[RMDB]
RNA sequence: GGGAACGACUCGAGUAGAGUCGAAAAAGUUGACUGUCGAUGUUGCUAACCCUAGCACUCCAGCCUACACUUUUACAACAGUGAAACCUGGCGCAGCAUUUAGUGUGUUAGCAUGCUAUAAUGGUCGCUCUUGGUAUGAGUUCGCUCAUACCAAGAGAAAAGAAACAACAACAACAAC
Reactivity to 2A3 in 0.01 (KOAc 150mM, MgCl2 10mM, bicine 150mM(pH8.5), 24C), signal-to-noise 1, nucleotides 027 to 126: a000g260u220u220g010a000c010u020g010u080c040g020a000u110g010u050u020g020c000u000a010a010c000c020c000u010a000g000c000a000c020u000c000c020a000g000c010c000u090a000c010a010c000u020u070u110u220a090c060a200a000c020a060g000u010g040a070a010a000c010c000u010g000g000c030g000c100a170g000c020a010u140u120u110a040g000u010g060u050g020u090u000a000g000c000a020u060g020c010u060a040u030a170a120u090g040g010u000c020g000
Reactivity to DMS in 0.01 (KOAc 150mM, MgCl2 10mM, bicine 150mM(pH8.5), 24C), signal-to-noise 3, nucleotides 027 to 126: a060g020u000u010g020a020c000u000g000u000c070g000a140u000g010u000u000g010c010u000a020a080c060c030c030u000a020g040c010a280c010u000c000c010a010g030c050c060u000a300c050a030c000u000u000u000u010a120c200a090a090c250a030g010u000g000a020a100a160c300c020u000g020g000c130g000c110a060g020c020a120u010u000u010a010g020u000g020u010g010u000u000a010g000c000a020u010g000c020u010a180u000a070a040u000g000g000u000c010g020